[RMDB]
RNA sequence: GGGAACGACUCGAGUAGAGUCGAAAAGUGCGGAACAGUGCUUGCCUUGCAUAUACUGCCUUAGUUCGUCGUAUGAUUGGAUUUCUUAACGUGCAAAAACGAGAAUCAGCUAGACGGGCACUGACUGGUACUCAGGACGUUUCGACGUCCUGAGUACAAAAGAAACAACAACAACAAC
Reactivity to 2A3 in 0.01 (KOAc 150mM, MgCl2 10mM, bicine 150mM(pH8.5), 24C), signal-to-noise 2, nucleotides 027 to 126: g080u100g000c050g060g040a150a060c030a030g010u000g020c000u000u030g000c000c000u000u100g010c040a050u100a030u030a180c020u080g030c020c060u120u100a060g030u110u120c010g020u020c020g010u080a030u110g100a110u110u100g170g020a030u120u060u000c020u090u060a230a110c070g030u040g060c100a160a090a070a020a000c050g010a020g020a020a010u030c020a010g000c010u020a000g000a020c000g000g010g000c010a000c010u010g050a030c030u040g040
Reactivity to DMS in 0.01 (KOAc 150mM, MgCl2 10mM, bicine 150mM(pH8.5), 24C), signal-to-noise 2, nucleotides 027 to 126: g000u000g030c090g010g010a090a140c060a050g050u010g000c000u000u000g030c030c010u010u000g000c010a120u000a060u010a030c050u000g010c020c060u010u000a150g010u000u020c100g040u000c140g050u010a060u000g020a120u010u000g040g010a050u000u010u000c060u000u020a030a090c100g040u010g000c130a030a030a100a060a040c040g040a070g010a040a050u000c050a080g020c030u000a060g000a030c010g010g010g000c000a060c040u000g000a160c040u000g000